Background
An RNA of 207 nucleotides, treated with 2A3 and DMS and read out base by base. Source: RMDB library RNAMAK, as collected in RNAgym. For DMS, 3,192 sequencing reads were counted. The RNA was probed in 150 mM KOAc, 10 mM MgCl2 and 150 mM bicine (pH 8.5) at 24 C. Values cover nucleotides 27 to 156.
RNA sequence: GGGAACGACUCGAGUAGAGUCGAAAACCCCUGUUCGCAGGGGCAUUACCGUAGGUUUGGCUACCCACCGACUGGAACUACUUCAGUGGCUUUCGAAAGAGAGCCAUGAAGCCAGUCGAGGCCAAACCUAAACGGCUACCUUCGGGUUCGCCCGAAAUACUAGUGUUUUGUUCGCAAAACACUAGUAAAAAGAAACAACAACAACAAC
Reactivity to 2A3 in 0.01 (KOAc 150mM, MgCl2 10mM, bicine 150mM(pH8.5), 24C), signal-to-noise 4, nucleotides 027 to 156: c010c000c000c000u010g060u070u100c260g040c070a000g000g010g000g010c020a020u090u280a060c020c020g010u010a010g000g020u000u000u000g000g000c010u040a160c070c050c040a040c020c010g000a000c010u010g020g020a090a040c030u160a090c000u290u010c020a160g150u090g060g000c010u010u000u000c000g040a050a090a040g000a020g000a000g020c020c000a000u010g000a000a000g000c000c000a000g000u000c000g000a000g000g000c010c000a000a000a000c000c000u000a020a020a000c000g020g000c040u090a090c020c020u020u030c020g000g000g090u060u090c200g060c030c000c000g030a030a020a040
Reactivity to DMS in 0.01 (KOAc 150mM, MgCl2 10mM, bicine 150mM(pH8.5), 24C), signal-to-noise 2, nucleotides 027 to 156: c000c000c000c000u000g030u000u010c250g080c000a050g000g000g000g030c000a020u000u000a060c000c010g040u000a060g000g000u000u000u010g020g030c000u010a020c020c000c020a300c160c020g000a020c000u000g000g000a120a160c080u000a300c010u000u010c010a030g020u010g090g010c000u000u000u000c020g020a190a160a300g000a010g000a010g010c010c000a020u020g000a020a030g000c000c000a020g000u000c000g000a040g000g020c000c020a000a010a010c000c020u020a000a020a040c030g000g030c030u000a060c040c050u000u000c010g010g010g000u000u000c120g030c000c000c000g000a030a210a260